[RMDB]
Chemical mapping of a 177-nucleotide RNA with DMS and 2A3. In probing experiments dimethyl sulfate is read out at A N1 and C N3, which are open when not base-paired. It was measured as part of the RMDB library OK2TST. Reactivities are given for positions 27 through 126. The 2A3 profile rests on 6,625 reads. For DMS the reverse transcriptase was MarathonRT. The DMS profile rests on 14,878 reads.
RNA sequence: GGGAACGACUCGAGUAGAGUCGAAAAUCUGACCAGUUGGGCCAGUUCAUGGACCUUCUGACGACCGAAAUGCCAAUCUGGUUGGCGUGGAAUUGGGCAAAUUCGAGUGCUUCUCGGCAUGCCGUGAAUCACCUGAGUGAUUCGUCACUCAGGUGAUAAAAGAAACAACAACAACAAC
Reactivity to DMS in 0.01 (KOAc 150mM, MgCl2 10mM, bicine 150mM(pH8.5), 24C), signal-to-noise 9, nucleotides 027 to 126: u000c040u010g020a120c090c010a030g000u000u000g010g010g010c020c010a040g010u000u010c250a110u010g000g000a040c010c020u000u000c010u000g020a110c080g010a110c080c050g000a110a090a060u000g010c010c010a020a050u000c200u010g020g010u000u000g000g010c030g040u000g010g010a070a100u010u010g020g010g000c040a030a060a200u010u000c020g010a060g020u000g020c200u000u010c020u000c020g010g010c240a190u000g010c020c020g020u000g000a110
Reactivity to 2A3 in 0.01 (KOAc 150mM, MgCl2 10mM, bicine 150mM(pH8.5), 24C), signal-to-noise 5, nucleotides 027 to 126: u040c030u020g060a070c040c020a000g000u030u000g020g010g010c040c020a040g020u190u240c120a150u120g040g000a050c010c000u030u010c020u030g030a040c040g070a060c020c020g040a090a020a030u060g000c010c010a020a050u050c110u180g300g000u060u020g040g000c040g000u070g020g040a170a200u160u140g050g010g000c030a060a050a060u120u050c020g010a010g020u070g130c080u170u120c010u020c010g020g000c040a030u060g010c000c020g040u080g040a010